[RMDB]
RNA sequence: GGGAACGACUCGAGUAGAGUCGAAAAUGGCGGCCUGGUCGAGAUGCCCGCGAUGACGCGCGUCGCCGAGCGUGGCGUGCGACUGUCGCAAUUUCACACCACCGCACUGUGCUCGCCGACCCGGGCGCACAAAGAAGCGAUUCGUCGCUUCUUUGUGAAAAGAAACAACAACAACAAC
Reactivity to DMS in 0.01 (KOAc 150mM, MgCl2 10mM, bicine 150mM(pH8.5), 24C), signal-to-noise 5, nucleotides 027 to 126: u010g020g020c010g010g000c080c150u000g020g050u000c100g010a060g010a020u000g000c180c170c140g010c000g020a020u000g000a060c020g010c010g000c020g030u000c010g040c020c020g010a090g020c190g030u010g010g000c000g010u010g010c000g000a060c090u010g020u010c020g030c020a120a050u010u000u000c050a100c120a050c020c010a100c030c020g000c030a080c130u010g010u010g010c080u010c010g020c030c010g010a110c020c010c010g000g000g010c020g000
Reactivity to 2A3 in 0.01 (KOAc 150mM, MgCl2 10mM, bicine 150mM(pH8.5), 24C), signal-to-noise 3, nucleotides 027 to 126: u100g040g010c020g030g010c060c080u090g010g020u040c060g010a010g020a060u060g070c060c110c050g000c010g000a020u030g030a020c010g000c000g000c000g010u010c000g000c010c020g020a100g020c190g020u010g000g000c010g000u010g000c000g040a100c080u090g000u010c000g000c010a020a040u030u050u050c070a070c000a000c040c010a010c000c010g060c020a080c040u070g060u120g080c040u050c060g000c020c010g020a060c000c000c020g010g000g020c020g010